[RMDB]
Chemical mapping of a 177-nucleotide RNA with 2A3 and DMS.

RNA sequence: GGGAACGACUCGAGUAGAGUCGAAAAUCUUAAUAUGUGAUUCCUGAUCAUGACUGGAAACAGUGUUAUUUGUGGUAGCUAUAGGGUAGGUAAGUUUUUCAGCCUGUUUUAGGUUUCUUGACCUAAACCAUAUGAGGAAAUUCGUUUCCUCAUAUGGAAAAGAAACAACAACAACAAC
Reactivity to 2A3 in 0.01 (KOAc 150mM, MgCl2 10mM, bicine 150mM(pH8.5), 24C), signal-to-noise 8, nucleotides 027 to 126: u000c010u030u120a100a050u150a140u270g080u020g040a090u090u030c000c010u040g040a030u080c060a060u110g120a040c020u030g020g020a020a030a020c010a030g020u020g050u160u090a140u050u110u120g090u050g060g020u020a010g000c020u030a040u100a180g000g030g030u010a010g030g020u020a040a120g030u040u020u010u040u070c040a020g030c000c020u050g060u020u040u020u040a010g000g000u030u040u050c100u120u240g030a030c000c010u000a030a010a010
Reactivity to DMS in 0.01 (KOAc 150mM, MgCl2 10mM, bicine 150mM(pH8.5), 24C), signal-to-noise 9, nucleotides 027 to 126: u000c030u010u010a070a100u010a070u000g010u000g010a170u000u000c020c020u010g000a110u010c090a050u010g010a060c040u000g000g000a100a080a120c040a050g010u000g010u010u000a070u010u010u000g020u000g010g010u000a050g010c050u000a060u010a070g000g010g010u000a030g010g010u000a040a070g010u000u000u000u000u000c070a110g010c020c020u000g000u000u000u000u000a020g010g000u000u000u010c140u010u010g010a060c020c020u000a030a030a140